[RMDB]
RNA sequence: GGGAACGACUCGAGUAGAGUCGAAAAGAUAUGGAAGACUGGUUCCCCAUCUACUAUAGCAACAGCCUGAUGGUCGGAAACGACCACAGGACAUGCUACGUAGAUGGGGAACCAGUCUUCCUAAGUCCGAUAGUAUUUCCUUCGGGAAAUACUAUCGAAAAGAAACAACAACAACAAC
Reactivity to DMS in 0.01 (KOAc 150mM, MgCl2 10mM, bicine 150mM(pH8.5), 24C), signal-to-noise 2, nucleotides 027 to 126: g010a120u000a300u000g000g000a040a020g000a050c000u010g030g010u000u000c000c000c000c000a010u000c000u000a020c000u010a250u000a000g010c000a020a100c270a290g000c010c000u000g000a150u000g030g010u000c000g010g000a120a100a260c000g000a000c000c010a010c020a010g000g010a020c140a100u000g000c000u000a000c300g000u000a010g010a010u000g010g000g010g000a020a000c010c000a000g000u000c000u000u000c000c000u020a000a110g000u030c060
Structure probing data (DMS) for a 177-nucleotide construct. It was measured as part of the RMDB library TTRINS. The RNA was probed in 150 mM KOAc, 10 mM MgCl2 and 150 mM bicine (pH 8.5) at 24 C.